[RMDB]
RNA sequence: GGGAACGACUCGAGUAGAGUCGAAAAACUUAGAGCAGGUUUAACAAUCAUCAUGUCGCACCCUUCUUUAAGAUCACUUUCUAAUUCACGAAGUGCUUCCAAACGGUUAGCAGGGUCCAUCUGAUACGUCCCACGUUAUAUUCGUAUAACGUGGGACAAAAGAAACAACAACAACAAC
Reactivity to 2A3 in 0.01 (KOAc 150mM, MgCl2 10mM, bicine 150mM(pH8.5), 24C), signal-to-noise 1, nucleotides 027 to 126: a010c070u110u050a060g010a000g090c010a030g020g090u040u120u120a100a030c030a050a030u110c050a030u040c010a050u140g030u100c060g000c050a130c000c030c000u000u040c030u030u120u070a030a040g010a060u070c000a020c040u000u090u120c050u000a200a220u150u120c040a050c080g020a060a000g010u030g040c060u090u030c030c000a090a180a080c130g110g000u100u050a000g000c020a040g040g010g040u000c040c000a080u060c020u040g030a080u000a150c040
Reactivity to DMS in 0.01 (KOAc 150mM, MgCl2 10mM, bicine 150mM(pH8.5), 24C), signal-to-noise 2, nucleotides 027 to 126: a070c020u010u000a030g000a010g010c120a020g010g000u010u000u010a060a060c080a090a070u010c180a060u000c150a040u000g000u000c090g010c190a130c150c010c010u000u000c010u000u000u010a110a080g020a060u000c040a020c070u000u000u010c070u020a090a140u020u010c140a070c150g010a050a030g000u000g000c160u000u010c030c040a030a100a090c180g010g010u000u000a040g000c080a090g010g000g020u010c010c060a080u000c020u000g010a110u000a070c210

The record gives the reactivity of an RNA of 177 nucleotides to 2A3 and DMS. High 2A3 reactivity points to a flexible backbone, as in loops and unpaired stretches. The data come from the RNA Mapping Database (RMDB), library OK2TST. DMS adducts were read by reverse transcription with MarathonRT. The RNA was probed in 150 mM KOAc, 10 mM MgCl2 and 150 mM bicine (pH 8.5) at 24 C. The 2A3 profile rests on 951 reads.